[RMDB]
An RNA of 207 nucleotides, treated with DMS and 2A3 and read out base by base. For 2A3, 2,168 sequencing reads were counted. 2A3 adducts were read by reverse transcription with SuperScript II with manganese. Source: RMDB library RNAMAK, as collected in RNAgym.
RNA sequence: GGGAACGACUCGAGUAGAGUCGAAAAUCCCAGGUACUUCGGUACCUGGGAAAAAAUCCUAAGUCAUCUUUGAUCUCCCCGAGGAUCGUAUCGGAAACGAUACGGGAGGUGGAGGGAGAUGAUAUGGAAAAAACAUUUUACCUUCGGGUAAAAUGAACUUACAUUUUUGUUUCGACAAAAAUGUAAGAAAAGAAACAACAACAACAAC
Reactivity to DMS in 0.01 (KOAc 150mM, MgCl2 10mM, bicine 150mM(pH8.5), 24C), signal-to-noise 1, nucleotides 027 to 156: u000c000c010c000a000g040g020u000a000c030u030u010c300g130g040u000a000c010c020u020g130g030g020a000a000a030a020a090a080u000c000c000u020a060a290g010u000c010a010u000c020u020u000u010g000a300u000c000u000c000c000c000c000g010a190g030g020a110u000c010g000u000a000u000c000g020g000a220a250a220c000g040a010u000a000c000g010g000g000a010g010g000u020g030g030a040g000g000g000a030g000a020u000g010a030u000a250u010g000g000a000a070a040a120a090a160c000a000u000u000u000u010a030c000c000u010u010c300g060g000g020u000a000a000a000a000u000g000a050a070
Reactivity to 2A3 in 0.01 (KOAc 150mM, MgCl2 10mM, bicine 150mM(pH8.5), 24C), signal-to-noise 2, nucleotides 027 to 156: u000c000c000c000a000g010g010u010a010c030u040u050c170g040g000u010a020c000c010u020g000g000g000a030a020a000a010a010a030u030c030c000u050a130a030g020u000c010a010u020c000u280u300u070g090a150u020c000u010c010c000c000c000g030a180g010g000a010u000c000g010u000a000u010c000g040g020a020a080a060c000g000a000u010a000c000g010g000g000a010g000g030u100g010g000a000g010g010g000a000g000a000u010g010a010u020a060u130g010g100a100a090a040a090a000a030c000a010u040u030u000u000a000c000c010u070u080c300g090g000g000u010a010a000a000a000u010g010a030a010